[RMDB]
RNA sequence: GGGAACGACUCGAGUAGAGUCGAAAAUAUCAGGUUCCGACGGUUGGGUAUUGGCCAACCGUGCCUAUAACGGGUAACGGGGGAUUAGGGUUUGAUUUCGGAGAGGGAGCAUGAGAGAUGGCUACCAAAAUCUGAAGUUGUUCGCAACUUCAGAUUUAAAAGAAACAACAACAACAAC
Reactivity to 2A3 in 0.01 (KOAc 150mM, MgCl2 10mM, bicine 150mM(pH8.5), 24C), signal-to-noise 3, nucleotides 027 to 126: u140a030u070c040a010g000g030u050u050c020c070g050a000c000g010g030u020u030g010g020g020u230a230u170u150g170g090c020c010a040a010c000c000g020u000g000c020c000u140a100u010a120a050c050g030g000g010u020a140a000c030g100g000g000g030g000a110u050u200a080g030g050g010u050u090u190g170a150u060u100u100c120g040g020a010g010a040g080g030g000a030g030c010a050u090g030a050g010a010g000a130u150g000g000c000u050a100c000c030a000
Reactivity to DMS in 0.01 (KOAc 150mM, MgCl2 10mM, bicine 150mM(pH8.5), 24C), signal-to-noise 3, nucleotides 027 to 126: u040a050u010c110a020g000g010u020u020c020c030g010a060c030g000g010u000u000g010g010g020u030a100u020u030g010g010c020c010a000a020c010c000g010u000g010c040c020u000a060u030a090a100c220g010g000g000u020a040a060c050g020g010g000g000g010a110u010u030a230g000g010g000u010u020u010g010a060u010u020u030c060g000g010a120g000a080g000g000g000a070g010c050a040u000g000a140g000a160g010a080u000g000g000c000u010a070c050c050a040
Source: RMDB libraries RFM100 and RFMREP, as collected in RNAgym. Structure probing data (2A3 and DMS) for a 177-nucleotide construct. Values cover nucleotides 27 to 126. The 2A3 profile rests on 1,197 reads.